[RMDB]
RNA sequence: GGGAACGACUCGAGUAGAGUCGAAAAGAAAAAGUCGUCGAGUCCGGAGAAUAUCGGUAGUGGAUACGAGUAUCGACUACAAAGAUAUCGAGACAUCCGGAGGAAAGUCUCGAGAGACGACGAAAAAGGGUUAAAUAUGGUUCGCCAUAUUUAACCCAAAAGAAACAACAACAACAAC
Reactivity to 2A3 in 0.01 (KOAc 150mM, MgCl2 10mM, bicine 150mM(pH8.5), 24C), signal-to-noise 4, nucleotides 027 to 126: g090a000a160a030a010a010g010u000c010g010u000c000g010a020g080u010c000c010g020g030a070g030a120a020u020a000u010c030g060g000u000a000g000u030g170g000a000u010a050c050g040a080g110u040a010u010c040g080a020c000u000a010c000a000a220a010g040a020u020a000u020c060g010a030g010a050c040a100u010c000c020g030g010a050g000g040a130a120a060g070u010c030u010c040g010a020g010a000g000a010c010g010a000c020g050a050a050a010a000a000
Reactivity to DMS in 0.01 (KOAc 150mM, MgCl2 10mM, bicine 150mM(pH8.5), 24C), signal-to-noise 5, nucleotides 027 to 126: g010a060a070a070a060a170g000u000c000g010u000c000g000a300g000u010c000c010g000g010a040g010a120a020u000a020u010c020g010g010u000a000g020u000g000g020a000u000a010c080g020a240g030u000a000u000c010g000a030c010u000a010c000a080a050a130g020a010u000a020u000c030g000a140g010a100c220a130u000c000c000g000g010a030g000g000a100a070a120g010u020c020u010c020g010a090g000a170g010a010c000g000a000c010g010a020a060a060a100a060